[RMDB]
RNA sequence: GGGAACGACUCGAGUAGAGUCGAAAAGCUCUAGGUGGAACCUACAGCCAGUGUCCUCGACUUGAACAUUAUGGACAAGUGCAAGUCAAGCCAGAACAGGGGUGCCCAGUGGGGUCUGACUCCACAGGACUGGCACCCUGCCUCAAUGCCCACCCCACGCUCACCAUUUAUUCGUAAAUGGUGAGCGAAAAGAAACAACAACAACAAC
Reactivity to 2A3 in 0.01 (KOAc 150mM, MgCl2 10mM, bicine 150mM(pH8.5), 24C), signal-to-noise 1, nucleotides 027 to 156: g030c010u050c050u080a020g000g060u080g190g140a230a170c020c020u070a040c010a050g010c000c050a050g000u000g060u190c000c000u000c030g010a010c010u060u040g050a140a050c010a180u120u110a200u300g130g050a020c080a050a050g010u080g030c000a010a010g020u030c010a010a040g020c000c000a000g000a090a030c030a080g000g080g000g030u010g000c070c000c020a020g010u000g000g020g000g010u080c160u160g140a140c000u020c000c000a000c010a000g000g060a030c140u050g010g020c000a040c000c000c000u000g000c010c000u050c000a080a130u100g010c000c000c000a100c000c000c000c000a030

An RNA of 207 nucleotides, treated with 2A3 and read out base by base. Reactivities are given for positions 27 through 156. The RNA was probed in 150 mM KOAc, 10 mM MgCl2 and 150 mM bicine (pH 8.5) at 24 C. 2A3 adducts were read by reverse transcription with SuperScript II with manganese.